[RMDB]
RNA sequence: GGGAACGACUCGAGUAGAGUCGAAAAUAAUGAUAUCAUAGACGGUGUGCAUUGUAGUAGCGCCCACCGAGGCGUUCAAAAAAGGGGCUAAGAAUUGGGGCUCCACGCACAGCCCCCGCUGAGGAUCGCUCGAUUUAGGAUUCGUCCUAAAUCGAGCAAAAGAAACAACAACAACAAC
Reactivity to DMS in 0.01 (KOAc 150mM, MgCl2 10mM, bicine 150mM(pH8.5), 24C), signal-to-noise 1, nucleotides 027 to 126: u010a000a100u030g010a140u040a050u000c030a130u030a080g010a150c040g000g010u010g030u010g010c000a080u000u000g000u090a100g070u050a100g000c060g040c000c010c000a120c200c160g000a100g000g000c030g000u010u030c010a020a030a050a050a110a080g000g000g010g040c000u010a020a050g030a070a150u050u000g000g000g000g000c000u000c020c040a060c070g020c020a050c150a070g000c030c010c010c000c130g000c050u020g000a070g010g010a070u000c090
Reactivity to 2A3 in 0.01 (KOAc 150mM, MgCl2 10mM, bicine 150mM(pH8.5), 24C), signal-to-noise 3, nucleotides 027 to 126: u210a020a030u100g040a010u030a020u200c080a050u050a210g090a130c070g030g020u040g010u020g030c040a070u060u190g030u130a100g010u050a020g050c000g000c000c000c000a060c060c040g000a060g000g000c010g030u050u060c090a030a030a030a070a000a000g100g000g000g000c040u060a110a010g150a250a160u190u210g040g000g040g110c020u000c020c020a010c010g000c000a040c010a060g000c010c010c000c000c050g000c020u050g000a050g080g040a010u070c080